This 177-nucleotide RNA was probed chemically with DMS and 2A3.
Values cover nucleotides 27 to 126.
For DMS the reverse transcriptase was MarathonRT.
The RNA was probed in 150 mM KOAc, 10 mM MgCl2 and 150 mM bicine (pH 8.5) at 24 C.

[RMDB]
RNA sequence: GGGAACGACUCGAGUAGAGUCGAAAACGGGCGUAGUUGUGGAGACACAAUGAGCUCGGUGAACGCUGUGCGUAGGUGUUAUCCCUACGGUGUUAGGCAGUGGUUCUCUGACAGCCUGAAGGGAUGACCGGGGUACUAGCUUCGGCUGGUGUCCCGGAAAAGAAACAACAACAACAAC
Reactivity to DMS in 0.01 (KOAc 150mM, MgCl2 10mM, bicine 150mM(pH8.5), 24C), signal-to-noise 9, nucleotides 027 to 126: c010g000g000g010c010g010u060a160g010u000u000g010u000g010g000a250g010a240c010a010c010a010a000u000g000a250g010c010u000c000g010g010u010g010a070a070c030g010c010u010g010u000g000c030g010u000a020g000g010u010g000u030u030a110u030c140c000c000u000a070c080g000g010u020g010u020u030a100g000g000c030a050g000u010g010g010u000u000c020u010c010u010g000a070c120a100g010c010c010u010g010a160a070g000g000g010a060u010g000a200
Reactivity to 2A3 in 0.01 (KOAc 150mM, MgCl2 10mM, bicine 150mM(pH8.5), 24C), signal-to-noise 9, nucleotides 027 to 126: c010g000g000g000c020g090u170a010g000u020u000g000u000g000g030a060g010a030c000a000c000a010a020u070g000a010g010c010u000c000g000g010u030g040a020a010c010g000c020u030g010u230g090c010g010u010a020g010g020u070g130u300u200a090u100c010c000c000u000a000c010g010g030u100g120u190u150a090g090g000c020a020g000u070g110g060u100u010c050u000c010u030g040a040c030a050g100c010c010u070g070a100a090g060g010g010a040u060g050a040
2A3 adducts were read by reverse transcription with SuperScript II with manganese. It was measured as part of the RMDB library OK1LIB.